[RMDB]
RNA sequence: GGGAACGACUCGAGUAGAGUCGAAAAAACUCGAAGACAGGCUUUUCAUCCUCCUGGAGGUGAGUCUGGGAGAGGGAGGUGAGGGCUCUGACAUCUAUGUGUGGAUGGCGCUGAGCCAUUGGGCAUCGAAAGCUUAACAUUUCGAUGUUAAGCUUUCAAAAGAAACAACAACAACAAC
Reactivity to DMS in 0.01 (KOAc 150mM, MgCl2 10mM, bicine 150mM(pH8.5), 24C), signal-to-noise 6, nucleotides 027 to 126: a060a060c030u010c030g010a120a070g000a140c060a030g010g000c030u010u000u000u000c050a110u010c040c010u000c090c140u010g020g010a050g010g010u000g000a080g010u010c020u000g010g010g000a130g000a110g010g000g000a120g010g020u000g000a110g000g010g000c020u000c030u000g000a070c060a030u000c030u000a060u000g010u000g030u010g020g000a030u000g010g000c050g000c190u010g000a150g010c010c010a070u000u000g010g000g000c090a080u010c160
Reactivity to 2A3 in 0.01 (KOAc 150mM, MgCl2 10mM, bicine 150mM(pH8.5), 24C), signal-to-noise 5, nucleotides 027 to 126: a000a000c030u030c020g040a060a010g080a030c010a000g020g030c010u110u110u130u110c050a130u080c020c000u040c010c070u130g060g030a020g000g070u090g030a050g060u000c020u020g000g030g010a140g020a040g010g020g020a120g000g030u200g050a090g000g020g020c010u020c040u100g020a010c010a040u030c030u090a120u120g180u020g070u130g110g010a010u010g020g000c080g030c130u100g020a000g000c000c000a000u000u040g020g020g020c010a020u060c110

Structure probing data (DMS and 2A3) for a 177-nucleotide construct. It was measured as part of the RMDB library OK2TST. The RNA was probed in 150 mM KOAc, 10 mM MgCl2 and 150 mM bicine (pH 8.5) at 24 C. 2A3 is a SHAPE reagent: it acylates the 2'-hydroxyl of flexible nucleotides of all four kinds. The 2A3 profile rests on 7,468 reads. For 2A3 the reverse transcriptase was SuperScript II with manganese.